[RMDB]
RNA sequence: GGGAACGACUCGAGUAGAGUCGAAAAGAGGGAAAUCCUAGGAGGCUGGAGGACUUGGGUUUGGGGCUAAGGCAUAGAAGAGCAGAGCUGUACCUGGAAGCUGAGGAACCUAGCAAAGGGCUCCGACUGUGCAAUGCUAAAGCGAGGGAAGAAGAAACGUAAAUUAUGGUUUCGACCAUAAUUUACGAAAAGAAACAACAACAACAAC
Reactivity to 2A3 in 0.01 (KOAc 150mM, MgCl2 10mM, bicine 150mM(pH8.5), 24C), signal-to-noise 1, nucleotides 027 to 156: g060a010g000g030g060a060a080a000u090c040c060u080a050g010g050a060g020g050c140u080g020g010a090g010g040a130c100u100u060g020g030g040u110u070u180g020g000g010g050c010u070a050a030g010g000c020a050u090a090g100a090a010g000a010g030c000a000g000a010g060c070u040g060u100a100c020c000u000g000g050a110a000g010c040u050g010a040g070g020a020a020c060c070u090a070g000c010a070a120a030g040g010g000c030u000c030c040g080a080c030u050g000u010g000c000a000a130u060g020c000u030a080a080a000g020c020g030a020g000g040g000a010a030g010a050a020g000a080a070a000